[RMDB]
The record gives the reactivity of an RNA of 177 nucleotides to DMS and 2A3. The RNA was probed in 150 mM KOAc, 10 mM MgCl2 and 150 mM bicine (pH 8.5) at 24 C. 2A3 is a SHAPE reagent: it acylates the 2'-hydroxyl of flexible nucleotides of all four kinds. DMS adducts were read by reverse transcription with MarathonRT.
RNA sequence: GGGAACGACUCGAGUAGAGUCGAAAAGACGCCUGAUGGCGAACGUGCGCAAGAUAAGAAUGGUGGUAUAUACUGCCUAGAAUAACUAAUGGACGGCAGAGCGCACGCACCACCAAUGUCCACCAGAAUCCCACCGAGUAUUCGUACUCGGUGGGAUAAAAGAAACAACAACAACAAC
Reactivity to DMS in 0.01 (KOAc 150mM, MgCl2 10mM, bicine 150mM(pH8.5), 24C), signal-to-noise 2, nucleotides 027 to 126: g000a130c020g010c000c040u020g020a160u010g000g000c010g000a020a050c010g040u000g000c000g020c000a140a090g030a070u050a130a050g020a140a110u000g000g000u000g000g000u000a060u040a210u040a230c010u000g000c040c000u000a110g000a080a080u060a070a140c170u000a020a050u050g030g000a050c140g040g000c000a000g040a210g110c000g000c000a000c000g000c030a050c000c030a110c030c020a040a070u080g010u010c010c000a040c000c000a110g030a180
Reactivity to 2A3 in 0.01 (KOAc 150mM, MgCl2 10mM, bicine 150mM(pH8.5), 24C), signal-to-noise 3, nucleotides 027 to 126: g050a000c000g010c000c040u280g210a230u300g010g000c010g000a030a000c000g030u030g000c000g000c000a040a020g040a300u110a080a070g090a070a130u070g010g030u000g000g040u020a160u010a000u040a150c000u000g000c000c000u010a030g060a040a060u230a080a020c090u080a040a260u240g070g050a040c050g000g000c030a000g000a030g060c000g000c020a000c000g020c000a030c030c020a000c010c000a000a020u070g050u060c000c000a000c000c000a010g090a040